[RMDB]
RNA sequence: GGGAACGACUCGAGUAGAGUCGAAAAGAUAUGGAGCGUGAACUACUUCGUCCUGUGAGCACACGAGGGCUUCGGAAACGAAGCCUACCCACCGUGUGCUCACAGAGCGAAGCACGCUCCUAAGUCAUCAAAUUAAGAGGUUCGCCUCUUAAUUUGAAAAAGAAACAACAACAACAAC
Reactivity to 2A3 in 0.01 (KOAc 150mM, MgCl2 10mM, bicine 150mM(pH8.5), 24C), signal-to-noise 1, nucleotides 027 to 126: g040a010u130a040u260g000g000a020g000c020g020u010g010a120a120c060u250a070c010u300u010c000g070u050c000c020u010g000u000g000a000g010c000a000c010a000c000g010a030g000g030g000c020u000u000c000g030g000a090a090a030c000g010a020a010g000c000c000u000a010c030c030c010a040c010c000g000u000g000u010g000c000u000c030a000c000a010g000a000g010c000g000a000a000g020c010a010c010g000c010u000c000c000u000a000a000g030u000c010a040
Reactivity to DMS in 0.01 (KOAc 150mM, MgCl2 10mM, bicine 150mM(pH8.5), 24C), signal-to-noise 4, nucleotides 027 to 126: g000a080u020a300u010g000g000a010g030c000g040u000g000a070a040c100u020a300c010u000u000c000g020u000c020c000u010g000u010g000a030g010c020a010c000a010c010g000a110g010g010g000c010u000u000c000g030g000a150a080a260c010g020a000a000g000c000c000u000a000c050c030c080a300c120c000g000u000g020u010g010c000u000c010a000c000a000g000a020g000c000g000a020a000g010c000a010c000g000c000u000c000c000u000a000a060g000u000c040a250
Conditions: 150 mM KOAc, 10 mM MgCl2 and 150 mM bicine (pH 8.5), 24 C. This 177-nucleotide RNA was probed chemically with 2A3 and DMS. Reactivities are given for positions 27 through 126. The DMS profile rests on 3,471 reads. For DMS the reverse transcriptase was MarathonRT.